[RMDB]
RNA sequence: GGGAACGACUCGAGUAGAGUCGAAAACGUCCCCGUCGUACAGAAUGGUAACAUAUCUCUCCAAAUAUCUGAGCUUGGGUAUACGGGGAAACCCAACCCCUUUGGAAGAUUGGGUAUAUGGCUAAAUUACAUCGAUUGUACUUCGGUACAAUCGAAAGCGAAAAUAAUUGUUCGCAAUUAUUUUCGCAAAAGAAACAACAACAACAAC
Reactivity to DMS in 0.01 (KOAc 150mM, MgCl2 10mM, bicine 150mM(pH8.5), 24C), signal-to-noise 1, nucleotides 027 to 156: c050g010u000c000c000c010c020g010u000c110g000u000a160c090a090g000a130a110u010g000g000u000a070a120c080a120u000a110u000c010u030c030u020c000c020a030a100a080u010a070u010c030u000g020a050g010c120u000u010g040g020g070u010a100u010a070c090g000g000g000g030a050a100a070c010c000c010a060a090c020c000c010c070u000u000u000g020g010a090a100g000a080u000u020g000g010g010u000a040u000a030u010g030g020c040u000a040a070a130u020u000a060c080a200u000c000g020a040u000u000g030u000a010c000u000u000c260g050g010u000a020c000a030a000u000c000g000a010a020a140
Reactivity to 2A3 in 0.01 (KOAc 150mM, MgCl2 10mM, bicine 150mM(pH8.5), 24C), signal-to-noise 4, nucleotides 027 to 156: c030g110u030c000c000c000c000g070u070c030g020u110a060c040a080g110a080a090u110g050g020u070a120a030c030a050u100a070u040c050u000c030u010c060c020a080a080a050u180a110u070c080u060g030a010g100c040u070u100g030g000g010u070a040u010a070c040g000g000g000g000a020a040a030c010c000c010a020a030c010c000c010c000u070u060u060g060g020a040a030g040a130u030u060g000g030g040u040a030u010a010u060g050g000c020u070a100a090a080u160u110a060c030a070u020c020g000a000u000u000g010u000a000c000u010u040c100g060g000u000a010c000a000a000u000c000g000a020a000a000